Annotation:
Conditions: 150 mM KOAc, 10 mM MgCl2 and 150 mM bicine (pH 8.5), 24 C. Chemical mapping of a 177-nucleotide RNA with DMS and 2A3. Reactivities are given for positions 27 through 126. It was measured as part of the RMDB library RFMREP. For DMS the reverse transcriptase was MarathonRT. For 2A3, 4,883 sequencing reads were counted. For 2A3 the reverse transcriptase was SuperScript II with manganese.
RNA sequence: GGGAACGACUCGAGUAGAGUCGAAAACACCUGUUCGCAGGUGAAAAUAUGGGCCCUUAAACCAUUCAUGUUGCCAUCCAAAUCAUGAAUGUUUUGGAGGCCCGUGGAAAACGUGUGUUCGCACACGGUAAAUCUUUCAGUUCGCUGAAAGAUUUACAAAAGAAACAACAACAACAAC
Reactivity to DMS in 0.01 (KOAc 150mM, MgCl2 10mM, bicine 150mM(pH8.5), 24C), signal-to-noise 3, nucleotides 027 to 126: c010a010c010c000u000g010u000u020c180g030c000a010g010g000u000g000a050a050a100a140u010a040u000g010g000g000c000c010c010u000u010a010a020a000c040c010a010u000u000c000a000u010g000u000u000g020c150c160a120u010c210c140a050a080a040u010c000a000u000g000a040a020u000g000u000u000u000u000g010g000a100g010g000c010c010c000g040u000g000g010a130a050a100a240c010g010u000g000u000g000u010u020c180g020c010a020c000a010c010g000
Reactivity to 2A3 in 0.01 (KOAc 150mM, MgCl2 10mM, bicine 150mM(pH8.5), 24C), signal-to-noise 2, nucleotides 027 to 126: c010a000c000c000u010g020u060u060c270g000c080a010g000g020u040g050a090a080a020a010u250a050u080g000g000g000c000c000c000u000u080a020a020a000c010c000a000u010u000c010a000u010g030u060u070g110c080c050a080u070c070c030a090a120a150u100c010a010u010g000a000a000u010g010u010u020u010u010g030g010a070g000g000c000c020c010g000u030g030g100a060a090a020a020c010g000u000g000u000g010u040u090c200g010c070a000c000a000c020g000